Source information:
Structure probing data (2A3) for a 207-nucleotide construct.
RNA sequence: GGGAACGACUCGAGUAGAGUCGAAAACGACCUUAAACAGUUCUGGUGGUGCUCUGAAUGGAGCGCUCUACUGAGAUUAUAAAAUAGAAGGUAAGCUAUUAUCUCUUACAACAGGGCAGGGCUUGUUAAAAGCCUUUCAGUUUCGACUGAAAGGCAAUCACUCAAAUGACUUCGGUCAUUUGAGUGAAAAAGAAACAACAACAACAAC
Reactivity to 2A3 in 0.01 (KOAc 150mM, MgCl2 10mM, bicine 150mM(pH8.5), 24C), signal-to-noise 1, nucleotides 027 to 156: c030g020a000c000c010u040u120a070a040a000c010a000g000u020u040c010u090g110g060u040g010g000u000g020c030u000c010u120g280a170a130u300g000g020a050g010c030g020c030u050c080u060a070c020u030g000a040g000a020u030u050a040u120a150a050a020a000u100a020g050a110a010g090g000u090a090a000g000c000u010a050u120u040a060u110c030u020c000u040u140a080c060a100a020c040a130g000g030g040c010a000g050g010g000c060u000u080g000u010u010a050a090a050a090g010c000c030u010u000u000c010a010g000u010u150u160c210g060a020c000u000g000a000a010a000g000g000c000a000a010
The reactions ran in a buffer of 150 mM KOAc, 10 mM MgCl2 and 150 mM bicine (pH 8.5), at 24 C.